[RMDB]
RNA sequence: GGGAACGACUCGAGUAGAGUCGAAAAGGCUUAGUUAAGGCAGCAACACUAAGUAGAAACAAACACUGCAUGUUGUGUACCGUCUGUGAGGACAGAGACUGGAGAGGGGAAACUUGCCCUAAAUGUGAAGAGCGAGUAGUUUCGACUACUCGCUCUUAAAAGAAACAACAACAACAAC
Reactivity to DMS in 0.01 (KOAc 150mM, MgCl2 10mM, bicine 150mM(pH8.5), 24C), signal-to-noise 1, nucleotides 027 to 126: g010g030c010u000u000a050g010u020u010a270a160g040g000c000a020g000c030a070a080c230a040c030u000a070a070g010u000a110g020a150a020a110c080a060a040a080c100a030c060u010g000c020a110u000g010u020u060g000u000g000u030a110c130c050g020u000c040u020g000u010g000a270g000g000a020c080a060g000a100g010a030c070u000g010g000a110g000a120g020g000g010g030a070a110a090c070u000u000g010c000c010c060u000a030a030a040u010g020u010g000
Overview:
This 177-nucleotide RNA was probed chemically with DMS. The reactions ran in a buffer of 150 mM KOAc, 10 mM MgCl2 and 150 mM bicine (pH 8.5), at 24 C.